Structure probing data (2A3 and DMS) for a 207-nucleotide construct. Values cover nucleotides 27 to 156.

[RMDB]
RNA sequence: GGGAACGACUCGAGUAGAGUCGAAAAGUAUGGAUGCCACCGUGACGGCUCAAUCACACAAGUGCCAACGAUAACGAGGCGCUCGCUAUUGCUGCGUAACUGACGGCCUGUCGGUCUGACGUUACAAAAAACGAAAAGUGGUUCGCCACUUUUCGAAGAAAGGCUAAAUGUUCGCAUUUAGCCUUUCAAAAGAAACAACAACAACAAC
Reactivity to 2A3 in 0.01 (KOAc 150mM, MgCl2 10mM, bicine 150mM(pH8.5), 24C), signal-to-noise 4, nucleotides 027 to 156: g090u080a040u160g030g030a060u090g050c020c010a050c060c060g070u090g060a060c070g020g020c010u050c070a080a150u130c020a030c030a050c000a110a070g030u020g060c010c000a100a080c060g070a120u090a150a040c080g000a060g050g020c040g030c050u070c060g010c030u070a090u140u220g050c080u060g020c030g020u000a010a010c000u010g040a010c000g000g010c010c030u190g070u240c100g000g020u000c020u020g000a000c030g010u000u010a000c000a000a010a050a000a030a000c020g000a000a010a000a000g000u000g030g040u040u030c100g010c050c010a000c000u020u000u000u000c000g000a020a020
Reactivity to DMS in 0.01 (KOAc 150mM, MgCl2 10mM, bicine 150mM(pH8.5), 24C), signal-to-noise 2, nucleotides 027 to 156: g000u000a100u000g010g010a100u000g020c020c020a080c050c080g020u020g030a070c050g010g000c050u000c080a040a130u010c020a120c060a150c040a060a100g060u000g020c050c000a050a140c100g010a120u000a040a140c050g000a240g000g010c030g050c010u000c010g000c010u010a060u000u000g020c010u000g000c010g000u000a050a100c010u000g000a300c300g010g010c010c000u010g020u000c140g110g010u010c020u000g000a300c290g000u000u000a020c000a000a040a000a100a090a130c020g000a000a010a030a030g010u000g010g000u010u010c270g030c040c000a010c010u000u000u010u000c030g000a030a110

Conditions: 150 mM KOAc, 10 mM MgCl2 and 150 mM bicine (pH 8.5), 24 C. The data come from the RNA Mapping Database (RMDB), library M2RFPK.